[RMDB]
RNA sequence: GGGAACGACUCGAGUAGAGUCGAAAAAGGCAGGUGGUGUCUCCAGCACCAGGGCCAUACGGCUGCAACACCCCUACAAGUGCCGGUAGGUGUGGGCUGAGACCAUCCUACAUGGGGAAGGCCCUGAGGCAAAGCUGUUAUUCGUAACAGCUUUGCCAAAAGAAACAACAACAACAAC
Reactivity to DMS in 0.01 (KOAc 150mM, MgCl2 10mM, bicine 150mM(pH8.5), 24C), signal-to-noise 1, nucleotides 027 to 126: a040g000g050c070a030g010g010u000g050g060u000g010u000c020u030c090c050a170g010c060a150c120c020a050g000g010g020c000c010a090u010a130c110g000g010c000u000g000c090a100a200c010a060c020c020c000c030u000a040c100a100a090g000u000g000c040c020g000g000u030a020g000g010u010g020u010g000g020g010c050u000g010a150g010a140c030c010a090u000c020c040u000a010c040a090u000g000g000g010g040a070a150g000g000c000c030c000u010g000a140

About this RNA: Chemical mapping of a 177-nucleotide RNA with DMS. For DMS the reverse transcriptase was MarathonRT. DMS (dimethyl sulfate) methylates the pairing face of unpaired adenines and cytosines. The DMS profile rests on 1,092 reads.